[RMDB]
RNA sequence: GGGAACGACUCGAGUAGAGUCGAAAAACCGAGCGUCCGUGCCAAGCGCUGCGUCGCCAGGGGUCUCCGGUCGGAAGGCUGGCGGUCCCGGGCGCAUAAGGAGUGGUGCACGGCUCAGGGCCGAAAGGCAGCAGGCAAAAGCCACCGCGCGGUGCAGCAUACUAGGUAAGUUCGCUUACCUAGUAUGAAAAGAAACAACAACAACAAC
Reactivity to DMS in 0.01 (KOAc 150mM, MgCl2 10mM, bicine 150mM(pH8.5), 24C), signal-to-noise 2, nucleotides 027 to 156: a150c000c000g000a110g000c050g010u010c040c060g010u000g030c030c040a170a180g020c040g030c020u000g000c040g010u000c000g020c000c020a050g020g010g030g000u010c010u000c000c010g020g020u000c010g030g030a220a130g030g000c020u010g030g020c080g020g020u000c010c000c010g000g010g010c010g000c040a000u010a080a090g010g010a090g010u000g020g030u000g030c060a160c170g010g020c010u010c030a180g000g030g020c000c000g000a110a090a160g000g000c000a080g040c070a100g030g010c010a020a080a150a290g010c000c020a040c000c020g010c040g000c030g000g010u000g000c000a170g000
Reactivity to 2A3 in 0.01 (KOAc 150mM, MgCl2 10mM, bicine 150mM(pH8.5), 24C), signal-to-noise 3, nucleotides 027 to 156: a000c030c020g010a040g030c030g060u050c080c010g020u050g050c030c040a190a060g020c040g010c010u020g000c000g020u030c000g050c080c010a130g010g010g000g000u000c010u000c010c010g000g000u010c000g040g180a130a060g040g000c010u010g000g000c000g010g000u000c000c000c000g010g000g000c010g000c000a010u030a040a030g120g030a110g010u010g000g020u060g010c110a030c040g020g000c010u020c010a020g000g000g040c000c000g040a080a030a020g000g000c010a010g000c020a010g000g020c010a040a020a060a060g010c010c000a000c010c010g000c000g000c020g030g020u040g000c010a020g030
Source: RMDB library ARCHII, as collected in RNAgym. Structure probing data (DMS and 2A3) for a 207-nucleotide construct. 2A3 adducts were read by reverse transcription with SuperScript II with manganese. The 2A3 profile rests on 4,528 reads. The DMS profile rests on 5,025 reads. Values cover nucleotides 27 to 156.